[RMDB]
RNA sequence: GGGAACGACUCGAGUAGAGUCGAAAAGAAAGAAAGAAAUUAGCUCGCCAGUUAGCGAGGUCUGUCCCCACACGACAGAUAAUCGGGUGCAACUCCCGCCCCUUUUCCGAGGGUCAUCGGAACCAACAAAACUCAGGCAACUUCGGUUGCCUGAGAACGUUACUACACCGUUCGCGGUGUAGUAACGAAAAGAAACAACAACAACAAC
Reactivity to 2A3 in 0.01 (KOAc 150mM, MgCl2 10mM, bicine 150mM(pH8.5), 24C), signal-to-noise 2, nucleotides 027 to 156: g080a040a030a010g070a040a150a020g100a020a140a030u160u090a040g030c000u000c010g030c010c020a190g120u160u200a020g000c020g010a000g000g010u010c000u000g010u000c030c050c050c010a050c020a000c030g010a000c000a000g010a000u010a060a080u100c010g000g000g000u020g010c010a000a000c010u000c010c000c000g040c010c000c000c000u170u140u030u000c000c000g020a010g010g000g030u070c030a010u000c000g010g000a010a000c050c010a030a100c020a000a090a030a060c000u000c000a000g000g000c000a000a020c010u070u150c180g090g000u000u000g000c000c000u000g000a000g000a000a000
Structure probing data (2A3) for a 207-nucleotide construct. Conditions: 150 mM KOAc, 10 mM MgCl2 and 150 mM bicine (pH 8.5), 24 C. For 2A3, 1,260 sequencing reads were counted.